This 207-nucleotide RNA was probed chemically with DMS and 2A3. The data come from the RNA Mapping Database (RMDB), library M2RFPK. The 2A3 profile rests on 3,473 reads. For DMS the reverse transcriptase was MarathonRT. For DMS, 5,372 sequencing reads were counted. For 2A3 the reverse transcriptase was SuperScript II with manganese.
[RMDB]
RNA sequence: GGGAACGACUCGAGUAGAGUCGAAAAUAAGCAGAAGACAACCACCUUUCCCGCUGACAAUAGCGUUAUCCCUCUGCACUUCGGUAAUAUGAGGGCACAGUAAAUCCCGCAAGGAUGAGAAUGUGAUUAAACAGUUACAGCUUCGGCUGUAACUGAACAAACAUACCUCGUUCGCGAGGUAUGUUUGAAAAGAAACAACAACAACAAC
Reactivity to DMS in 0.01 (KOAc 150mM, MgCl2 10mM, bicine 150mM(pH8.5), 24C), signal-to-noise 3, nucleotides 027 to 156: u000a120a110g000c030a070g000a100a120g020a160c060a090a110c030c020a100c030c050u000u000u000c010c020c010g000c040u030g010a150c080a070a120u000a060g000c050g040u030u000a120u010c010c010c010u000c020u000g000c080a090c100u000u000c130g000g030u010a040a130u020a120u000g000a060g020g040g000c030a040c030a090g010u020a050a120a110u010c010c000c050g020c110a090a130g020g000a060u010g010a120g000a130a080u010g010u000g000a160u000u000a070a110a170c010a010g020u000u000a020c000a000g000c000u000u010c300g070g030c000u000g010u000a010a000c000u000g000a070a120
Reactivity to 2A3 in 0.01 (KOAc 150mM, MgCl2 10mM, bicine 150mM(pH8.5), 24C), signal-to-noise 5, nucleotides 027 to 156: u140a030a010g030c040a010g030a140a020g060a160c050a070a060c040c040a080c020c020u040u040u040c000c030c040g000c050u050g060a080c050a170a160u120a110g010c020g070u100u100a100u090c000c000c000u020c010u020g000c040a030c040u070u090c150g080g000u050a050a040u100a100u300g020a010g000g000g000c000a000c000a000g030u030a000a030a030u020c010c020c000g110c080a040a040g020g000a010u020g000a010g010a010a030u030g020u010g010a010u070u190a140a090a030c010a000g000u000u000a000c000a000g000c000u040u110c200g110g000c000u000g000u010a000a000c000u000g000a010a000